[RMDB]
RNA sequence: GGGAACGACUCGAGUAGAGUCGAAAAACUCGGUUCGCCGAGUGGGACCCGUAGGUUCGGUAGUUGUGUGGGAGCUAUCCAGAUUCGAAAGAGUCUGUAUAGCGUUGAUCACACAGUAUCCAACGAACCUAAACGGCUGCGAGCGCUUCGGCGCUAAUAUAUUUUACGGUUUCGACCGUAAAAUAUAAAAAGAAACAACAACAACAAC
Reactivity to 2A3 in 0.01 (KOAc 150mM, MgCl2 10mM, bicine 150mM(pH8.5), 24C), signal-to-noise 2, nucleotides 027 to 156: a020c020u020c020g000g040u130u080c270g060c100c010g000a010g010u090g010g070g070a080c010c000c020g030u040a000g020g000u010u010c010g020g070u260a060g060u160u030g000u010g000u010g010g000g000a010g000c010u000a000u040c110c000a000g000a020u010u000c000g040a060a050a040g010a030g010u000c000u000g000u020a000u000a010g020c010g000u040u020g000a000u010c000a000c030a000c010a000g020u030a060u060c050c030a050a040c030g000a000a000c010c000u020a070a190a000c050g090g000c040u220g060c100g170a040g000c010g010c020u040u150c260g070g010c030g000c020u020a060a000
Reactivity to DMS in 0.01 (KOAc 150mM, MgCl2 10mM, bicine 150mM(pH8.5), 24C), signal-to-noise 2, nucleotides 027 to 156: a050c020u000c000g020g010u000u020c260g040c010c000g020a030g020u010g010g010g000a160c020c010c010g020u000a020g000g000u000u000c000g040g000u010a170g020u000u000g020u000g010u000g000g000g000a110g010c000u010a010u000c020c030a010g000a040u000u000c000g000a200a110a300g000a040g020u000c010u000g020u000a030u000a030g010c000g000u000u010g010a050u000c000a010c000a000c000a030g030u000a070u000c080c020a060a060c010g000a020a010c000c010u010a010a110a060c090g020g020c050u000g030c000g040a100g020c000g030c020u000u000c300g060g000c000g020c000u000a030a160
Structure probing data (2A3 and DMS) for a 207-nucleotide construct. Source: RMDB library RNAMAK, as collected in RNAgym. For 2A3 the reverse transcriptase was SuperScript II with manganese. Conditions: 150 mM KOAc, 10 mM MgCl2 and 150 mM bicine (pH 8.5), 24 C.